[RMDB]
RNA sequence: GGGAACGACUCGAGUAGAGUCGAAAAUUACUGAUGGUUCGAAGACACAUGUUGUACCCGAUCCUCUGAAAUUGUUCGUUAAGCUUGGUAAGGAAAGGCCGACGUCGGACAAGGUGCUUAAAGAGAAGAGGUACCACAUAUUCGUAUGUGGUACCUCAAAAGAAACAACAACAACAAC
Reactivity to 2A3 in 0.01 (KOAc 150mM, MgCl2 10mM, bicine 150mM(pH8.5), 24C), signal-to-noise 2, nucleotides 027 to 126: u070u060a040c010u060g090a100u110g020g000u080u090c080g090a120a050g070a020c020a000c010a080u150g030u060u010g110u170a070c020c020c000g000a070u050c010c000u030c010u020g000a090a080a080u030u020g060u000u060c070g030u050u080a150a040g050c040u050u070g040g000u090a080a050g040g000a080a010a000g050g010c000c000g000a050c010g010u120c010g030g000a000c020a010a020g060g020u100g110c020u080u170a090a100a010g050a010g000a230a020
Reactivity to DMS in 0.01 (KOAc 150mM, MgCl2 10mM, bicine 150mM(pH8.5), 24C), signal-to-noise 2, nucleotides 027 to 126: u020u000a120c050u000g060a100u020g000g000u000u010c040g050a080a170g000a050c040a070c070a100u000g010u000u000g000u000a130c100c040c010g000a110u030c030c000u000c030u020g000a110a070a130u000u010g000u000u010c020g000u010u000a080a110g000c160u000u000g040g000u000a130a080g000g000a120a120a080g000g020c020c030g010a090c190g020u000c030g000g010a030c040a030a020g020g030u020g030c130u000u010a020a040a100g000a140g000a110a020
Chemical mapping of a 177-nucleotide RNA with 2A3 and DMS. For DMS, 973 sequencing reads were counted. DMS adducts were read by reverse transcription with MarathonRT.